The record gives the reactivity of an RNA of 177 nucleotides to 2A3 and DMS.
Reactivities are given for positions 27 through 126.

RNA sequence: GGGAACGACUCGAGUAGAGUCGAAAAUUACAGCAGCACCGAACGCACUCCCCUCGCGCUUUUGCCGCAACCGAAAAGAGCACCAUCGCCUCGCACAUGUGUGCUUGAGGGGUGUGGUGCAGCGGCAAUGCUCACGACGAUUCGUCGUCGUGAGCAUAAAAGAAACAACAACAACAAC
Reactivity to 2A3 in 0.01 (KOAc 150mM, MgCl2 10mM, bicine 150mM(pH8.5), 24C), signal-to-noise 4, nucleotides 027 to 126: u130u060a040c050a030g040c000a020g040c010a060c030c020g010a070a020c070g010c030a030c060u060c010c050c000c000u020c020g080c000g010c060u020u000u100u110g000c000c020g000c020a060a070c060c020g110a010a040a010a130g110a020g000c010a000c000c000a020u090c010g130c040c010u030c010g100c000a020c010a070u260g300u140g000u000g170c050u140u280g000a020g000g000g000g020u080g010u010g010g020u000g000c000a000g000c000g010g000c000a000
Reactivity to DMS in 0.01 (KOAc 150mM, MgCl2 10mM, bicine 150mM(pH8.5), 24C), signal-to-noise 1, nucleotides 027 to 126: u060u020a090c080a110g010c060a030g010c000a060c000c000g000a040a140c030g000c030a120c030u000c000c020c030c000u000c000g040c080g010c070u000u040u010u010g000c040c000g000c000a170a110c100c100g000a160a010a090a070g000a120g000c000a020c000c010a030u020c050g000c000c000u000c000g000c000a000c000a210u060g000u120g020u000g000c000u010u010g000a020g000g000g000g000u040g000u010g010g010u000g000c010a030g020c100g010g000c000a020
For 2A3 the reverse transcriptase was SuperScript II with manganese. The DMS profile rests on 1,927 reads. For DMS the reverse transcriptase was MarathonRT. It was measured as part of the RMDB library OK1LIB.